About this RNA:
Structure probing data (2A3) for a 207-nucleotide construct. The reactions ran in a buffer of 150 mM KOAc, 10 mM MgCl2 and 150 mM bicine (pH 8.5), at 24 C. The 2A3 profile rests on 366 reads. The data come from the RNA Mapping Database (RMDB), library PDB130.

RNA sequence: GGGAACGACUCGAGUAGAGUCGAAAAGACUCGUACGGUCACUGAAUCCUGCCCAGUGCAGGUAUCUGAACACCUCGUACAAGAGGACGAAGGACCUGUCAACGGCGGGGGUAACUAUGACCCUCUUAAGGUAGCGUAGUACCUUGCCGCAUCAGUACCUCUAGACCCUGUUCGCAGGGUCUAGAGGAAAAGAAACAACAACAACAAC
Reactivity to 2A3 in 0.01 (KOAc 150mM, MgCl2 10mM, bicine 150mM(pH8.5), 24C), signal-to-noise 1, nucleotides 027 to 156: g070a030c090u060c000g120u190a000c030g000g010u030c040a030c130u030g030a020a030u150c000c000u030g070c000c000c070a070g000u070g060c000a010g030g050u030a200u000c030u020g050a070a030c040a020c030c000u000c010g110u180a120c070a210a000g000a000g030g060a020c000g130a110a020g020g010a000c000c000u010g090u160c060a070a070c020g010g000c040g000g000g000g000g010u030a040a070c040u010a040u110g080a170c000c000c000u110c120u130u170a220a170g040g000u020a040g190c030g000u050a020g000u000a030c000c000u010u090g090c020c030g080c000a110u250c070a080g050u030a030